Chemical mapping of a 170-nucleotide RNA with DMS and 2A3. The data come from the RNA Mapping Database (RMDB), library 15KLIB. 2A3 adducts were read by reverse transcription with SuperScript II with manganese. Conditions: 150 mM KOAc, 10 mM MgCl2 and 150 mM bicine (pH 8.5), 24 C. For DMS, 51,716 sequencing reads were counted.

RNA sequence: GGGAACGACUCGAGUAGAGUCGAAAAAGGUUUGCAACUCUGUUAAGGAUACUCUGGCUUAUUAUGCUCACAGCGUGUUGUACAGAGUUUUUCCUUAUGACAUGGAUUCUGGUGUGUCAUCCUUUAGAUAUCCAUGGGUUCGCCCAUGGAAAAAGAAACAACAACAACAAC
Reactivity to DMS in 0.01 (KOAc 150mM, MgCl2 10mM, bicine 150mM(pH8.5), 24C), signal-to-noise 8, nucleotides 027 to 129: a020g000g030u000u000u000g040c050a020a010c040u000c030u030g000u000u000a060a060g000g000a060u020a040c010u030c030u030g010g030c000u000u000a090u020u010a040u030g010c050u060c250a160c190a130g010c000g020u040g030u030u030g000u040a060c000a030g000a020g020u010u010u030u010u010c010c010u040u020a060u020g000a060c040a000u020g010g000a070u000u000c050u010g000g050u030g030u040g030u030c090a070u010c000c000u030u040u070a040g020a080u040a070
Reactivity to 2A3 in 0.01 (KOAc 150mM, MgCl2 10mM, bicine 150mM(pH8.5), 24C), signal-to-noise 9, nucleotides 027 to 129: a010g060g000u050u030u060g050c010a000a020c010u030c010u030g030u070u040a030a010g040g010a000u010a030c000u000c000u010g010g010c010u130u080a080u160u100a080u300g020c030u070c080a120c040a040g000c010g020u050g030u050u060g060u100a130c000a000g000a000g000u020u000u010u030u000c010c000u010u010a090u080g040a020c010a030u090g060g020a080u140u070c040u150g090g030u090g010u000g030u060c010a030u020c010c000u080u080u090a100g020a080u110a050